This 177-nucleotide RNA was probed chemically with 2A3 and DMS. The RNA was probed in 150 mM KOAc, 10 mM MgCl2 and 150 mM bicine (pH 8.5) at 24 C. For 2A3, 14,680 sequencing reads were counted. For DMS the reverse transcriptase was MarathonRT.
[RMDB]
RNA sequence: GGGAACGACUCGAGUAGAGUCGAAAAGGCUAGUUCGGAGGUGAAUUUUUGCUAUCGUAGUCUUUUGGCUACGCUCUUUUGAGCGGUACAGGAUCACCUCCAACUGUACCGAUAGCAUAUAGCCGAAGGGUGGCUGCUUCUUCGGAAGCAGUUACCCAAAAGAAACAACAACAACAAC
Reactivity to 2A3 in 0.01 (KOAc 150mM, MgCl2 10mM, bicine 150mM(pH8.5), 24C), signal-to-noise 9, nucleotides 027 to 126: g010g000c030u030a020g050u090u140c080g030g060a070g060g080u160g150a140a180u070u070u040u090u060g000c000u000a000u000c000g000u000a000g010u010c030u030u280u150u300g000g000c000u000a000c010g000c000u010c000u010u260u100u300g000a000g000c000g000g000u000a000c000a010g050g030a040u080c040a040c070c010u010c000c000a010a000c000u000g000u000a000c000c000g000a000u010a000g000c000a000u060a010u010a060g010c010c010g040a080a090
Reactivity to DMS in 0.01 (KOAc 150mM, MgCl2 10mM, bicine 150mM(pH8.5), 24C), signal-to-noise 4, nucleotides 027 to 126: g000g000c020u010a030g000u020u010c070g010g000a140g010g010u010g010a060a050u010u010u030u000u010g010c000u000a000u000c010g030u000a000g010u010c000u000u050u010u060g020g000c000u000a010c010g010c010u000c010u000u020u030u040g010a000g010c000g010g010u000a000c010a030g000g020a100u020c080a100c030c020u000c020c030a050a030c010u000g000u000a000c010c000g010a020u000a010g030c010a050u010a040u000a070g010c000c000g000a100a120
The DMS profile rests on 16,254 reads.